RNA sequence: GGGAACGACUCGAGUAGAGUCGAAAACGGCUUCGACAGGCUGGCGAAAUCCAAAUUGUGAUUCAGGUCGAGAGUGAGUCUCCUCUCGUAAAUACAAGACUCAAAACAAUAGUAACUGCGAACAACAUCGUAAGCUUCAAGCGCGUAGCAGUAGCUGGUAUUAUCAGAGGUUCGCCUCUGAUAAUACAAAAGAAACAACAACAACAAC
Reactivity to 2A3 in 0.01 (KOAc 150mM, MgCl2 10mM, bicine 150mM(pH8.5), 24C), signal-to-noise 9, nucleotides 027 to 156: c020g030g000c030u070u050c060g080a050c030a080g010g030c020u030g030g030c060g050a070a030a030u040c030c020a050a090a120u150u130g050u050g050a080u120u080c070a050g050g040u070c010g000a000g000a000g010u000g000a000g000u000c010u070c020c010u000c010u000c010g140u170a000a000a010u020a010c010a010a000g010a000c000u000c000a040a060a030a020c070a030a140u130a080g050u060a050a040c010u020g020c020g060a080a040c060a060a020c010a150u150c040g040u100a140a070g010c010u180u210c140a140a060g010c020g020c020g050u060a020g000c010a010g020u020a020g010c030u080g030
Reactivity to DMS in 0.01 (KOAc 150mM, MgCl2 10mM, bicine 150mM(pH8.5), 24C), signal-to-noise 2, nucleotides 027 to 156: c040g000g020c030u000u010c020g060a170c140a200g000g060c030u010g020g000c010g000a060a060a130u000c050c010a040a130a080u000u010g000u000g000a120u000u000c050a080g020g020u000c020g000a050g020a030g000u000g010a090g000u000c020u000c060c000u000c020u000c030g030u010a020a030a070u010a080c080a070a050g000a040c020u000c030a090a110a130a070c100a100a120u000a070g020u010a070a060c050u000g030c020g000a040a150c030a100a110c110a130u000c030g000u000a080a110g000c010u000u010c080a010a170g000c020g030c080g040u000a140g010c020a040g020u000a070g020c040u020g030